An RNA of 177 nucleotides, treated with DMS and read out base by base. Reactivities are rounded to 0.1 and cut off at 0 and 3. The data come from the RNA Mapping Database (RMDB), library OK2TST. The RNA was probed in 150 mM KOAc, 10 mM MgCl2 and 150 mM bicine (pH 8.5) at 24 C.
RNA sequence: GGGAACGACUCGAGUAGAGUCGAAAAGAUAUGCCAGUUGACAUGAUGUUUCAAGGUAGUCCAAAGGCAUAUUUGACCCUGGACUUAACAUCUGAGGGCCAGUUAGUAUAAUAUUUUGAGGCAAGUCUGACAGCUUGACUUUCGAGUCAAGCUGUCAAAAAGAAACAACAACAACAAC
Reactivity to DMS in 0.01 (KOAc 150mM, MgCl2 10mM, bicine 150mM(pH8.5), 24C), signal-to-noise 1, nucleotides 027 to 126: g000a010u000a010u010g000c000c020a170g000u040u000g010a070c020a150u020g010a130u000g030u000u010u030c110a110a050g030g000u040a090g010u010c040c100a070a240a210g060g000c030a000u000a010u000u020u000g000a120c000c020c010u020g010g010a090c000u000u000a040a050c120a120u000c110u010g020a070g000g010g000c000c010a140g000u000u010a060g000u020a070u000a070a180u000a130u000u010u010u010g020a060g000g010c020a040a080g010u000c060
The DMS profile rests on 714 reads.